[RMDB]
RNA sequence: GGGAACGACUCGAGUAGAGUCGAAAACAUCGAUAGAUGGCACUGUUCUAUGAGAUCGUCGUACAUGGGAAAUGAAAUGUGUCUGUCCGAAUGUAUGGCUUUAAGAUAGCUGUGAUACCGUAUACAGGUCGGUGUCGGAGAUUCGAAUCUCUUUAAGCGAGUCUUGUUUGUUCGCAAACAAGACUCGAAAAGAAACAACAACAACAAC
Reactivity to 2A3 in 0.01 (KOAc 150mM, MgCl2 10mM, bicine 150mM(pH8.5), 24C), signal-to-noise 2, nucleotides 027 to 156: c000a020u030c020g060a040u050a200g140a040u130g040g000c000a010c050u050g090u230u060c020u040a050u020g010a020g020a120u070c030g020u000c010g010u050a040c020a020u050g040g030g040a030a120a090u080g030a080a160a100u170g120u070g060u050c090u080g080u000c050c000g160a200a030u050g020u040a030u020g000g000c000u000u070u050a060a000g030a070u020a040g020c000u000g020u030g140a020u030a110c030c000g020u050a050u070a160c040a020g120g000u030c020g000g000u030g000u000c010g080g020a050g020a030u170u160c080g020a140a110u000c000u000c000u050u060u050a040a020g060